The record gives the reactivity of an RNA of 177 nucleotides to 2A3 and DMS. Values cover nucleotides 27 to 126. Conditions: 150 mM KOAc, 10 mM MgCl2 and 150 mM bicine (pH 8.5), 24 C. The data come from the RNA Mapping Database (RMDB), library M2PK50. 2A3 adducts were read by reverse transcription with SuperScript II with manganese.
RNA sequence: GGGAACGACUCGAGUAGAGUCGAAAACUCUGCUAAUUCGUUAGCAGAGGUACACUGGGACGGGUCGGGAGGGGGAUAGUCGCGGUCCCAAGAAGAAUCCAGCAAGCACAUUAUUCGUAAUGUGCAAUAGUAGUAAGAUCUUCGGAUCUUACUACUAAAAAGAAACAACAACAACAAC
Reactivity to 2A3 in 0.01 (KOAc 150mM, MgCl2 10mM, bicine 150mM(pH8.5), 24C), signal-to-noise 2, nucleotides 027 to 126: c000u020c000u000g000c000u000a040a010u070u050c220g020u030u010a000g010c010a000g000a000g020g000u020a030c070a030c050u070g010g020g200a060c080g030g020g190u220c070g020g030g090a280g050g050g020g030g010a040u090a070g060u040c030g000c010g060g030u000c000c000c000a000a010g040a010a000g030a020a020u050c030c010a040g050c050a130a030g010c000a000c000a000u000u020a000u030u040c150g040u020a010a010u010g010u000g020c010a000a010
Reactivity to DMS in 0.01 (KOAc 150mM, MgCl2 10mM, bicine 150mM(pH8.5), 24C), signal-to-noise 2, nucleotides 027 to 126: c000u000c000u000g000c000u010a010a020u000u010c170g020u000u000a010g000c000a010g020a000g000g030u000a030c150a170c050u010g000g000g000a140c180g010g010g010u030c160g000g000g010a160g000g000g000g000g020a020u000a020g000u000c050g010c060g000g020u000c000c000c020a030a090g010a060a060g010a070a090u000c040c060a090g000c140a140a190g000c000a010c000a000u000u000a020u000u000c230g010u000a010a000u000g010u000g010c010a060a050